Chemical mapping of a 177-nucleotide RNA with 2A3. The reactions ran in a buffer of 150 mM KOAc, 10 mM MgCl2 and 150 mM bicine (pH 8.5), at 24 C. For 2A3, 2,213 sequencing reads were counted.
RNA sequence: GGGAACGACUCGAGUAGAGUCGAAAAUGAACGUGGGUACAUCUCUCUCAGACUGUACGACAGUCUGACUCUCUCGCACUCUAGUUCCACGAGAGAGAGAGAGCGUUGGAACUAGGGUGAAAUGAAAGUCCGACAAUUGGUUCGCCAAUUGUCGGACAAAAGAAACAACAACAACAAC
Reactivity to 2A3 in 0.01 (KOAc 150mM, MgCl2 10mM, bicine 150mM(pH8.5), 24C), signal-to-noise 2, nucleotides 027 to 126: u140g010a080a010c070g060u060g010g100g000u110a070c050a160u040c030u020c000u000c010u020c040a020g010a040c020u010g020u100a110c120g150a070c110a000g000u000c010u010g010a010c000u000c000u020c010u000c050g000c030a000c020u000c000u000a000g000u000u000c000c020a000c020g050a070g000a000g000a000g000a000g010a000g000a000g000c000g070u080u130g020g000a000a000c000u010a010g000g020g010u010g040a110a070a040u210g030a140a060a020